Chemical mapping of a 207-nucleotide RNA with 2A3 and DMS.
[RMDB]
RNA sequence: GGGAACGACUCGAGUAGAGUCGAAAACUUUCGAAUCAUAUCAUUUGGACUGGAUAACAGUGUUGAGGCAGAGAAGUUUCAUAAUCUGCCUAAGAUCAUUGCAUUUACAAGUGACGAACCCACUGCACAAAUUUUGGCAAUGACAGAAACUUCAUCACGUAAAUGAGGGGUUCGCCCCUCAUUUACGAAAAGAAACAACAACAACAAC
Reactivity to 2A3 in 0.01 (KOAc 150mM, MgCl2 10mM, bicine 150mM(pH8.5), 24C), signal-to-noise 2, nucleotides 027 to 156: c020u070u130u080c070g080a070a070u120c040a070u090a050u180c070a100u110u070u060g090g050a010c020u030g010g050a040u040a180a120c060a030g040u030g070u190u080g050a000g000g000c000a000g000a000g020a080a020g020u030u000u000c030a020u110a110a050u000c000u010g000c000c000u010a030a040g000a000u020c000a000u010u010g040c000a020u040u120u110a100c040a100a090g000u000g060a060c020g060a100a050c070c020c020a010c080u060g040c100a050c050a140a220a120u100u060u010u070g060g010c020a000a020u040g000a010c030a060g050a060a090a030c010u120u080c040a090u100c050a030
Reactivity to DMS in 0.01 (KOAc 150mM, MgCl2 10mM, bicine 150mM(pH8.5), 24C), signal-to-noise 1, nucleotides 027 to 156: c030u000u020u000c020g000a010a050u000c030a090u000a170u010c050a120u010u050u010g010g030a070c050u000g000g010a110u000a040a150c040a030g020u000g000u010u000g010a020g030g030c000a030g010a100g040a100a040g030u000u000u000c110a070u000a120a300u000c000u010g010c000c000u000a110a060g000a100u000c030a020u010u010g010c000a130u000u000u010a070c020a050a100g010u020g040a200c020g000a030a100c050c050c020a110c020u010g040c040a120c040a030a060a280u000u000u010u000g030g080c000a050a060u000g030a080c040a100g020a070a030a060c070u000u010c090a100u000c070a110
2A3 adducts were read by reverse transcription with SuperScript II with manganese. It was measured as part of the RMDB library OK3TST. The RNA was probed in 150 mM KOAc, 10 mM MgCl2 and 150 mM bicine (pH 8.5) at 24 C. Reactivities are given for positions 27 through 156.